[RMDB]
RNA sequence: GGGAACGACUCGAGUAGAGUCGAAAAGUAUUAUGUAUGCUAGCGAUCCAUACAUAGAAGGUGAGAUAAAUAUAGAAGACGAUGGAGGGAUCGAUUGGAGUAAAAGAAGAUUCGUCAGCGGCGGAACCCGCAUACUCGUAUUCGUACGAGUAUGCGGAAAAGAAACAACAACAACAAC
Reactivity to 2A3 in 0.01 (KOAc 150mM, MgCl2 10mM, bicine 150mM(pH8.5), 24C), signal-to-noise 3, nucleotides 027 to 126: g020u030a070u200u020a050u050g000u000a010u050g010c080u050a080g110c020g080a010u050c010c020a020u020a030c000a000u110a010g090a090a010g060g050u090g020a100g070a060u100a110a180a010u140a030u070a110g100a070a010g050a020c040g000a000u050g070g020a010g020g060g030a030u050c040g050a050u050u150g070g050a050g040u070a040a080a040a000g150a170a000g030a060u070u010c020g030u020c030a000g010c030g030g000c010g010g010a010a040c000
Reactivity to DMS in 0.01 (KOAc 150mM, MgCl2 10mM, bicine 150mM(pH8.5), 24C), signal-to-noise 3, nucleotides 027 to 126: g000u020a070u020u010a000u020g000u000a000u030g000c090u020a100g000c040g060a090u000c110c000a030u000a000c030a030u010a010g000a070a090g000g030u020g000a080g030a060u020a070a040a080u000a120u040a040g010a100a240g000a070c090g030a050u000g030g010a090g000g000g000a020u010c040g010a160u000u000g000g000a060g050u010a110a040a080a090g040a080a110g000a120u000u020c120g030u000c050a070g000c050g000g040c030g000g010a070a090c130